[RMDB]
RNA sequence: GGGAACGACUCGAGUAGAGUCGAAAAGAGUUCUUCAAAACCCUUGCGCAUCCGGCGCGGAUCAGGAUUUUGGAGCUGCUGGUCGAGCGGGACCGUUCGGUCGGUGAGUUGCUGUCCUCGGACGUCGGUAACACGUGUGGUUCGCCACACGUGUUACAAAAGAAACAACAACAACAAC
Reactivity to DMS in 0.01 (KOAc 150mM, MgCl2 10mM, bicine 150mM(pH8.5), 24C), signal-to-noise 1, nucleotides 027 to 126: g020a110g000u000u010c040u010u050c130a000a000a100a040c020c040c020u040u100g000c070g060c140a190u000c090c070g000g060c040g000c000g080g000a060u030c120a020g010g000a080u000u000u000u000g000g000a000g000c050u010g000c020u000g010g000u000c000g000a050g050c000g000g000g000a090c090c040g020u000u000c000g000g060u000c000g040g030u030g000a100g000u030u000g000c020u000g010u000c060c000u060c010g110g000a140c040g000u010c080g000
Reactivity to 2A3 in 0.01 (KOAc 150mM, MgCl2 10mM, bicine 150mM(pH8.5), 24C), signal-to-noise 2, nucleotides 027 to 126: g080a000g020u070u130c060u100u020c050a110a090a050a100c070c000c000u050u150g040c090g000c030a110u100c050c010g100g050c020g020c140g000g050a230u180c050a030g060g040a130u130u000u000u120g000g020a010g010c000u050g030c010u010g080g000u000c000g000a000g000c020g010g070g200a240c250c000g000u000u010c030g010g000u020c000g000g000u060g050a080g000u010u020g110c010u000g020u020c000c020u000c020g110g030a120c000g000u050c020g010
Structure probing data (DMS and 2A3) for a 177-nucleotide construct. For 2A3, 940 sequencing reads were counted. For DMS the reverse transcriptase was MarathonRT. The DMS profile rests on 1,704 reads. Conditions: 150 mM KOAc, 10 mM MgCl2 and 150 mM bicine (pH 8.5), 24 C. It was measured as part of the RMDB library OK1LIB. 2A3 adducts were read by reverse transcription with SuperScript II with manganese.